Structure probing data (2A3 and DMS) for a 177-nucleotide construct. The DMS profile rests on 5,903 reads.
[RMDB]
RNA sequence: GGGAACGACUCGAGUAGAGUCGAAAAGAUAUGGAUCCCUGUAGGGAGUCGGUGGGUCGGAAACGACCCAUACGACGAGGAUCUACUGGGAUCCUAAGUCAAAGGUUAGCGGUUCGCCGCUAACCAACUAGUCUUCCUAGUUCGCUAGGAAGACUAGAAAAGAAACAACAACAACAAC
Reactivity to 2A3 in 0.01 (KOAc 150mM, MgCl2 10mM, bicine 150mM(pH8.5), 24C), signal-to-noise 2, nucleotides 027 to 126: g010a000u000a010u120g010g000a000u000c000c000c010u020g000u000a010g010g060g070a300g020u000c010g000g010u010g010g000g000u010c010g030g000a040a010a010c010g000a010c050c020c010a000u030a080c000g010a000c000g000a010g000g040a050u010c000u000a000c040u030g020g010g010a000u010c000c000u000a010a000g000u010c040a200a050a040g010g000u000u010a000g000c000g010g150u040u090c300g050c120c000g000c000u000a000a000c000c000a000a000
Reactivity to DMS in 0.01 (KOAc 150mM, MgCl2 10mM, bicine 150mM(pH8.5), 24C), signal-to-noise 3, nucleotides 027 to 126: g000a010u000a130u020g000g000a020u000c000c000c000u010g020u000a000g000g020g000a040g050u000c010g020g030u010g000g010g020u000c010g030g000a040a050a100c000g010a000c000c010c010a000u000a010c010g020a020c010g020a140g020g000a070u000c000u000a010c010u000g000g010g000a000u000c000c000u000a000a060g000u000c020a110a150a140g010g010u000u000a000g020c010g000g000u010u010c300g040c000c000g020c000u000a000a000c000c000a030a060